[RMDB]
RNA sequence: GGGAACGACUCGAGUAGAGUCGAAAACAAUCAGGCCAGCCGUGGCCGCCGACCCUACAGGGUUGCGCCGGCCUCCGGGUUGCACACCGCCCAGAAGGUGGAGUGAGGUGAGCCGUCGCCAACAGCGAUGACGGCGAUUUUUCGAAAUCGCCGUCAUAAAAGAAACAACAACAACAAC
Reactivity to 2A3 in 0.01 (KOAc 150mM, MgCl2 10mM, bicine 150mM(pH8.5), 24C), signal-to-noise 3, nucleotides 027 to 126: c030a010a120u170c060a040g030g030c020c030a000g030c010c010g030u030g000g000c000c010g010c000c010g000a010c000c000c010u090a150c160a180g010g010g020u000u030g060c170g010c070c050g000g000c010c000u030c020c050g080g000g040u060u130g000c020a020c000a010c020c010g040c010c000c020a110g090a140a050g000g040u060g010g020a070g030u060g010a050g010g080u050g040a030g040c020c000g030u050c010g000c020c020a100a030c040a050g070c030g050
Reactivity to DMS in 0.01 (KOAc 150mM, MgCl2 10mM, bicine 150mM(pH8.5), 24C), signal-to-noise 4, nucleotides 027 to 126: c050a050a130u060c120a120g000g010c020c020a060g020c070c060g020u010g010g010c010c000g000c020c030g000a040c000c000c000u060a130c300a180g000g000g020u000u000g000c160g020c040c040g010g010c000c010u000c110c080g000g000g000u010u020g000c030a080c000a050c000c010g010c000c000c050a190g000a110a270g000g030u000g000g040a120g010u000g000a120g010g030u020g000a120g010c020c000g000u000c000g010c010c030a130a060c150a120g020c040g020
An RNA of 177 nucleotides, treated with 2A3 and DMS and read out base by base. DMS adducts were read by reverse transcription with MarathonRT. The RNA was probed in 150 mM KOAc, 10 mM MgCl2 and 150 mM bicine (pH 8.5) at 24 C.